[RMDB]
RNA sequence: GGGAACGACUCGAGUAGAGUCGAAAAGAAAGAAAGAAAGAAACCGUCUCUGCUAGUCUCACGGUAACCACGUUAAAAUCGCAACGAAAGAAGCUCGCACUCAACUUCAACGGCUUAACGAGUGCAAAAAACUUACUGAUCUUCGGAUCAGUAAGAAGACUUUACAAGUCUUCGGACUUGUAAAGUCAAAAGAAACAACAACAACAAC
Reactivity to 2A3 in 0.01 (KOAc 150mM, MgCl2 10mM, bicine 150mM(pH8.5), 24C), signal-to-noise 1, nucleotides 027 to 156: g040a050a040a000g080a010a140a000g040a050a100a010g020a100a020a020c040c020g070u030c050u020c030u100g040c040u010a060g040u100c030u080c100a030c020g040g010u030a060a030c020c000a000c020g000u030u030a050a020a000a050u190c050g010c120a110a060c040g030a080a010a100g020a000a000g020c130u240c220g000c070a000c000u000c000a100a030c000u010u010c020a070a000c030g000g020c050u060u020a010a000c050g000a020g020u000g000c010a010a020a020a020a020a010c000u000u000a000c000u000g000a000u000c010u000u050c080g020g040a010u000c000a000g000u000a000a000g000a000a010
Chemical mapping of a 207-nucleotide RNA with 2A3. The RNA was probed in 150 mM KOAc, 10 mM MgCl2 and 150 mM bicine (pH 8.5) at 24 C. For 2A3, 787 sequencing reads were counted. Reactivities are given for positions 27 through 156. Source: RMDB library M2RFPK, as collected in RNAgym.